[RMDB]
RNA sequence: GGGAACGACUCGAGUAGAGUCGAAAAAAGUCUUGCGCGCUUCGGCAGUCAAAUCUACCCUUCGCCUUCUACGUCUGCGUCAUCGUGUGUUUGCCUUCGGGGUCUAUGGCGCCGCUGAAAAGUUGCGAACCAGAGGAAAAUUCGUUUUCCUCUGGUUAAAAGAAACAACAACAACAAC
Reactivity to DMS in 0.01 (KOAc 150mM, MgCl2 10mM, bicine 150mM(pH8.5), 24C), signal-to-noise 6, nucleotides 027 to 126: a060a060g010u000c030u010u000g010c040g010c040g000c040u010u000c050g010g000c040a080g020u010c060a050a080a070u020c060u010a120c050c010c020u010u010c060g000c030c020u010u010c030u010a080c080g010u010c040u000g010c060g020u000c030a040u010c060g010u020g010u000g010u010u010u010g010c020c010u000u010c070g010g000g010g010u000c050u010a070u010g010g000c040g010c020c040g000c050u010g000a070a080a050a070g000u000u000g010c040g000
Reactivity to 2A3 in 0.01 (KOAc 150mM, MgCl2 10mM, bicine 150mM(pH8.5), 24C), signal-to-noise 8, nucleotides 027 to 126: a000a000g060u030c030u040u060g020c050g000c000g000c020u030u020c030g030g000c020a030g040u070c050a040a040a080u040c030u070a110c010c000c000u010u050c020g010c010c010u040u030c020u050a040c030g050u010c040u030g030c010g040u020c020a060u050c030g030u050g010u020g020u130u130u130g050c020c010u020u050c060g020g000g010g030u000c020u030a070u070g020g000c010g000c010c010g000c010u000g010a010a020a030a050g030u040u050g010c010g000

Chemical mapping of a 177-nucleotide RNA with DMS and 2A3. For DMS the reverse transcriptase was MarathonRT. The reactions ran in a buffer of 150 mM KOAc, 10 mM MgCl2 and 150 mM bicine (pH 8.5), at 24 C. For 2A3 the reverse transcriptase was SuperScript II with manganese.